[RMDB]
RNA sequence: GGGAACGACUCGAGUAGAGUCGAAAAAUUGGUUGGGUGGUGGUUUUACAAUUGUUUAUGUAAGGGUUCAAUUCCGCAUUACAUAGUCACAUAAUUGCCUAUGACGAGAACUCAUGCACCACUCAUAAAUUAAUGACGUGUUCGCACGUCAUUAAUUAAAAGAAACAACAACAACAAC
Reactivity to 2A3 in 0.01 (KOAc 150mM, MgCl2 10mM, bicine 150mM(pH8.5), 24C), signal-to-noise 2, nucleotides 027 to 126: a010u120u220g110g060u030u040g020g000g000u000g010g040u000g000g060u050u070u070u100a020c010a030a040u130u140g070u030u300u070a080u030g020u030a000a030g020g000g000u000u090c040a010a010u150u050c040c040g070c040a050u030u030a000c010a010u000a000g030u040c010a040c020a100u250a190a130u190u040g000c020c020u040a020u010g010a000c020g020a010g010a140a010c030u000c010a040u110g000c000a010c030c010a000c010u010c000a000u040a010
Reactivity to DMS in 0.01 (KOAc 150mM, MgCl2 10mM, bicine 150mM(pH8.5), 24C), signal-to-noise 5, nucleotides 027 to 126: a090u010u010g020g010u000u000g010g010g020u000g000g020u000g010g000u000u000u000u010a050c040a030a120u020u000g010u010u020u000a090u020g010u000a020a050g010g010g010u000u000c130a100a240u010u000c050c040g020c100a140u000u010a150c020a020u000a020g000u010c070a040c260a120u010a050a080u000u000g010c130c050u000a010u010g000a090c120g010a190g010a040a060c100u010c010a090u000g010c000a020c000c010a020c010u010c010a030u000a040
This 177-nucleotide RNA was probed chemically with 2A3 and DMS. The DMS profile rests on 4,540 reads. The RNA was probed in 150 mM KOAc, 10 mM MgCl2 and 150 mM bicine (pH 8.5) at 24 C.